[RMDB]
RNA sequence: GGGAACGACUCGAGUAGAGUCGAAAAAGACUUGCUUUACAUCAAUGCCCAGCAGUUCACUCGAUGAUGCACAACUCCAGGGCCAGCGUCAAAAGUACCGCCCUGUGUCUUGUCUCCUCGUGGUGUCGAAAUAAUCCUGGUUCGCCAGGAUUAUUUCAAAAGAAACAACAACAACAAC
Reactivity to 2A3 in 0.01 (KOAc 150mM, MgCl2 10mM, bicine 150mM(pH8.5), 24C), signal-to-noise 2, nucleotides 027 to 126: a010g040a020c030u050u050g000c000u100u090u120a040c010a060u070c030a070a110u150g060c010c010c000a020g000c040a050g030u060u070c010a000c040u020c000g030a020u030g010a030u090g010c140a010c010a030a020c000u000c020c000a000g000g000g000c050c050a070g010c020g090u050c020a150a020a270a000g070u080a030c000c010g000c010c000c000u020g040u020g020u030c010u010u000g000u000c000u000c020c010u040c000g020u110g020g000u030g050u060c060
Reactivity to DMS in 0.01 (KOAc 150mM, MgCl2 10mM, bicine 150mM(pH8.5), 24C), signal-to-noise 3, nucleotides 027 to 126: a080g010a090c070u010u000g020c050u010u000u010a090c240a140u020c080a080a060u010g010c040c010c010a100g010c130a080g010u020u010c030a060c020u000c010g000a050u010g000a060u010g000c130a030c050a030a030c030u000c020c010a040g000g000g010c030c100a130g020c100g020u000c130a050a060a110a140g010u000a040c120c180g000c010c000c000u010g010u000g020u000c050u000u000g000u010c010u000c000c050u000c040g030u000g010g000u010g010u000c120
Source information:
The record gives the reactivity of an RNA of 177 nucleotides to 2A3 and DMS. The DMS profile rests on 2,293 reads. Source: RMDB library VIROID, as collected in RNAgym. The reactions ran in a buffer of 150 mM KOAc, 10 mM MgCl2 and 150 mM bicine (pH 8.5), at 24 C.